[RMDB]
RNA sequence: GGGAACGACUCGAGUAGAGUCGAAAACUAAAUGGAGUUCACUUGCAGAAAAAGCUACCAACGUUUCUAGGGAUUAUUUUUGGCAGCUUAAAUGAAAGUUUUAAACAUACAUAAUCCAGAGUCCAAAGUUUUAGGGGUGAUUCGUCACCCCUAAAACAAAAGAAACAACAACAACAAC
Reactivity to DMS in 0.01 (KOAc 150mM, MgCl2 10mM, bicine 150mM(pH8.5), 24C), signal-to-noise 1, nucleotides 027 to 126: c120u000a040a100a110u000g010g010a070g000u000u010c150a100c000u050u000g000c000a030g000a180a080a000a070a030g000c010u050a140c060c010a090a060c300g000u020u080u000c050u000a070g000g000g010a000u000u040a030u000u000u000u000u000g010g050c110a050g040c050u000u020a030a060a100u000g000a020a000a050g000u000u000u040u010a000a020a220c050a050u040a140c040a020u000a050a070u000c010c000a220g000a080g000u000c020c000a040a100a110
Reactivity to 2A3 in 0.01 (KOAc 150mM, MgCl2 10mM, bicine 150mM(pH8.5), 24C), signal-to-noise 2, nucleotides 027 to 126: c010u060a030a150a020u090g040g030a060g080u040u030c070a010c030u000u060g050c030a040g080a030a050a070a070a000g030c000u000a010c040c030a090a000c060g050u000u000u130c030u060a080g010g050g000a010u030u000a040u080u120u050u030u030g050g000c030a000g000c000u100u070a070a130a040u170g110a030a090a020g030u000u060u120u150a050a010a000c000a020u080a000c010a010u050a010a000u040c000c000a000g030a000g100u000c000c000a090a000a030

Chemical mapping of a 177-nucleotide RNA with DMS and 2A3. DMS adducts were read by reverse transcription with MarathonRT. The data come from the RNA Mapping Database (RMDB), library OK1LIB. Conditions: 150 mM KOAc, 10 mM MgCl2 and 150 mM bicine (pH 8.5), 24 C.